Source: RMDB library TTRDES, as collected in RNAgym. The record gives the reactivity of an RNA of 177 nucleotides to DMS. The reactions ran in a buffer of 150 mM KOAc, 10 mM MgCl2 and 150 mM bicine (pH 8.5), at 24 C.

[RMDB]
RNA sequence: GGGAACGACUCGAGUAGAGUCGAAAAAAAAGAUAUGGACCGACUACCCACCGUGUAUGCCACCGAAGAACAAGCUCGGAAACGAGCUUGGGAGGUGGUUUACACGAGGUCGGUCCUAAGUCAAAAACUAUGUACAUGACUUCGGUCAUGUACAUAGAAAAGAAACAACAACAACAAC
Reactivity to DMS in 0.01 (KOAc 150mM, MgCl2 10mM, bicine 150mM(pH8.5), 24C), signal-to-noise 3, nucleotides 027 to 126: a140a100a150a090g010a130u010a200u000g010g000a000c010c010g000a010c000u000a130c010c000c020a300c100c000g000u000g010u000a000u010g020c010c000a000c000c000g000a060a110g020a150a220c010a020a000g000c000u000c000g010g000a070a070a220c000g020a010g010c000u000u000g000g000g000a040g000g030u000g010g010u000u000u000a010c000a030c000g020a080g000g010u000c000g010g000u000c000c000u010a010a070g020u050c160a030a050a150a080a150
The DMS profile rests on 2,187 reads.